[RMDB]
RNA sequence: GGGAACGACUCGAGUAGAGUCGAAAACGGCAGACUGGAUGGAGCGCAAUAUAGAUCACCGAAUUGAGGUCAUGGCUCCAAUUCGUGACGAACGACUCAAACAGCGUAUCAUUGAUAUCCUUAAUAAAUAAAUAAUGACUUUCGAGUCAUUAUUUAUAAAAGAAACAACAACAACAAC
Reactivity to 2A3 in 0.01 (KOAc 150mM, MgCl2 10mM, bicine 150mM(pH8.5), 24C), signal-to-noise 3, nucleotides 027 to 126: c010g030g020c070a050g030a200c000u070g030g010a040u020g070g040a050g010c040g020c060a020a010u170a010u050a160g160a110u030c010a010c040c060g030a060a050u060u080g020a030g020g010u020c040a100u090g090g010c000u000c030c000a010a030u000u010c000g000u010g010a020c000g020a120a030c020g100a080c030u000c050a040a090a090c020a020g000c000g030u060a070u130c030a060u030u110g070a040u140a040u300c020c010u080u150a170a100u300a250a300
Reactivity to DMS in 0.01 (KOAc 150mM, MgCl2 10mM, bicine 150mM(pH8.5), 24C), signal-to-noise 4, nucleotides 027 to 126: c110g000g000c080a060g000a150c040u010g010g020a070u000g020g010a050g000c020g020c100a080a090u000a110u000a130g010a150u010c000a040c080c060g010a050a050u000u010g000a070g010g010u000c060a090u010g010g010c000u010c020c020a020a040u020u010c010g020u000g010a060c040g000a110a150c060g000a080c030u000c020a060a080a140c090a050g010c050g020u000a060u010c040a110u000u000g000a130u000a060u000c020c020u000u000a060a100u000a120a060